[RMDB]
RNA sequence: GGGAACGACUCGAGUAGAGUCGAAAAUAUGGCGUGCAAUAAUCCCGCCCUGCUGUCCAUAUCAACCCGCCAAGAAGCUCCCAGAGCCGAGCGGCUUGGAUUAGGGCGGGAUCUCUCAUCAGUCACCGGCACCGAAUUACUUCGGUAAUUCGGUGCCAAAAGAAACAACAACAACAAC
Reactivity to 2A3 in 0.01 (KOAc 150mM, MgCl2 10mM, bicine 150mM(pH8.5), 24C), signal-to-noise 1, nucleotides 027 to 126: u060a030u060g000g000c030g000u150g060c030a070a160u130a060a050u060c000c000c000g000c000c000c010u020g020c000u180g000u000c000c000a080u020a060u040c020a040a100c060c000c000g040c000c000a100a070g110a060a020g130c100u020c040c130c010a140g040a000g030c010c040g020a000g010c010g020g030c020u060u090g010g000a000u030u210a000g000g000g000c070g000g000g000a000u000c000u000c000u110c000a110u010c020a000g010u000c000a060c090c000
The record gives the reactivity of an RNA of 177 nucleotides to 2A3. The 2A3 profile rests on 409 reads. Values are in units of 0.01, from 0 to 300, in steps of 10. Source: RMDB library RFM100, as collected in RNAgym. Conditions: 150 mM KOAc, 10 mM MgCl2 and 150 mM bicine (pH 8.5), 24 C.